[RMDB]
RNA sequence: GGGAACGACUCGAGUAGAGUCGAAAAGAUAUGGAGAUGUAACGAGCAACAGCUGUAAACCAGAAUUCAGUCGGAAACGACUGAAUUCUGGUUUACAGACAUGCUCAGUUAGAUCAUCUCCUAAGUCGUGUAAACAAUUGUUCGCAAUUGUUUACACAAAAGAAACAACAACAACAAC
Reactivity to DMS in 0.01 (KOAc 150mM, MgCl2 10mM, bicine 150mM(pH8.5), 24C), signal-to-noise 3, nucleotides 027 to 126: g000a130u020a300u000g010g010a010g020a010u000g000u010a030a040c050g000a020g010c000a050a100c300a200g010c000u000g000u000a010a010a010c000c010a020g000a030a020u000u000c000a000g020u000c000g000g000a090a120a210c010g000a020c010u000g000a000a000u000u000c000u000g000g000u000u000u000a000c010a020g000a010c110a150u000g010c010u000c000a070g020u010u000a030g020a220u000c020a010u000c000u000c000c000u010a060a080g020u000c110
Overview: Structure probing data (DMS) for a 177-nucleotide construct. DMS (dimethyl sulfate) methylates the pairing face of unpaired adenines and cytosines. The reactions ran in a buffer of 150 mM KOAc, 10 mM MgCl2 and 150 mM bicine (pH 8.5), at 24 C.